Conditions: 150 mM KOAc, 10 mM MgCl2 and 150 mM bicine (pH 8.5), 24 C. Chemical mapping of a 177-nucleotide RNA with DMS and 2A3.
RNA sequence: GGGAACGACUCGAGUAGAGUCGAAAACGCCGUUUAAAGCGGUACGCGAGCUGGGUUCAGAACGUCGUGAGACAGUUCGGUCCCUAUCCUCCGCGGGCGCAGGAGAAUCGAGGGAGGCUGCCCCUAGUUUCUGGAUAUACUUCGGUAUAUCCAGAAAAAAAGAAACAACAACAACAAC
Reactivity to DMS in 0.01 (KOAc 150mM, MgCl2 10mM, bicine 150mM(pH8.5), 24C), signal-to-noise 7, nucleotides 027 to 126: c110g000c000c010g010u020u020u030a060a120a160g000c010g000g010u010a060c090g020c050g000a050g020c210u010g000g000g020u010u000c010a050g020a020a010c030g010u010c000g010u050g000a240g000a010c010a070g020u000u000c000g000g010u010c020c000c010u000a060u010c110c010u000c020c050g010c030g000g000g020c040g010c070a080g000g010a120g000a070a070u010c090g010a070g000g000g010a110g010g000c040u010g000c050c000c010c040u010a110g010
Reactivity to 2A3 in 0.01 (KOAc 150mM, MgCl2 10mM, bicine 150mM(pH8.5), 24C), signal-to-noise 7, nucleotides 027 to 126: c040g010c010c010g010u030u070u150a120a100a020g010c010g010g030u060a060c050g030c030g030a030g040c040u040g030g030g030u130u110c030a060g020a030a020c030g020u010c010g060u090g080a100g000a020c040a070g000u000u010c010g000g020u040c010c000c000u020a060u050c010c020u020c040c030g000c030g020g020g000c050g000c020a050g020g100a070g040a100a100u140c090g030a060g040g040g000a030g050g030c020u030g020c000c000c000c000u020a050g070
It was measured as part of the RMDB libraries RFM100 and RFMREP.